RNA sequence: GGGAACGACUCGAGUAGAGUCGAAAACAACAAAACAAAACAUAGGGGAGUCAGGGUUCGGAACCCCUGCCCGAACCUAGGGUAACACUGACUGUGGAGGGGAAAAGAAAGAAAACAAAACAAAACAAUAUUAUACUACGUUCGCGUAGUAUAAUAUAAAAGAAACAACAACAACAAC
Reactivity to 2A3 in 0.01 (KOAc 150mM, MgCl2 10mM, bicine 150mM(pH8.5), 24C), signal-to-noise 5, nucleotides 027 to 126: c040a010a010c040a020a110a010a010c060a030a120a040a010c050a100u250a080g000g000g010g000a050g030u070c040a030g020g010g010u000u030c010g020g050a130a140c030c000c000c000u020g040c000c010c000g020a020a010c000c000u020a010g050g020g000u050a070a000c040a020c090u050g110a010c030u040g030u100g060g060a170g020g030g030g050a010a060a050a020g130a030a080a020g120a020a070a010a000c080a030a100a020a020c080a040a100a000a000c050a040
Reactivity to DMS in 0.01 (KOAc 150mM, MgCl2 10mM, bicine 150mM(pH8.5), 24C), signal-to-noise 4, nucleotides 027 to 126: c100a140a080c190a080a080a110a090c170a030a090a100a070c100a120u010a090g000g000g000g000a060g000u000c060a070g000g000g010u000u010c020g020g040a100a060c040c000c000c010u000g000c130c000c010g000a050a070c000c020u010a120g000g000g000u030a040a130c090a210c130u000g000a070c060u000g040u020g030g000a140g000g000g020g000a060a030a080a090g000a070a060a080g040a120a080a070a040c170a050a030a100a090c160a100a070a090a050c220a080